Source: RMDB library OK1LIB, as collected in RNAgym. The record gives the reactivity of an RNA of 177 nucleotides to 2A3. The reactions ran in a buffer of 150 mM KOAc, 10 mM MgCl2 and 150 mM bicine (pH 8.5), at 24 C.
RNA sequence: GGGAACGACUCGAGUAGAGUCGAAAAUUACAUAAGUCUAACACCUUGUUUCGGACUAACAAGGCCGAAUGGAGGAUGGCCGGUCCUCCAUAGUUAGACGUCCGAGAACCAGCCGAAAUGAAAAAGAGGAUCGAGGUAUGUUCGCAUACCUCGAUCCAAAAGAAACAACAACAACAAC
Reactivity to 2A3 in 0.01 (KOAc 150mM, MgCl2 10mM, bicine 150mM(pH8.5), 24C), signal-to-noise 1, nucleotides 027 to 126: u100u100a120c110a070u230a230a000g000u000c000u000a000a000c000a080c000c000u000u010g030u000u000u150c210g040g070a120c120u090a000a030c020a000a020g000g000c000c050g140a120a050u010g000g050a000g000g000a050u000g000g050c000c060g000g030u090c000c000u000c040c000a000u000a000g000u000u000a000g000a020c000g050u000c050c030g040a120g000a070a000c000c000a000g000c000c000g070a160a000a000u260g000a020a000a000a140a000g160a020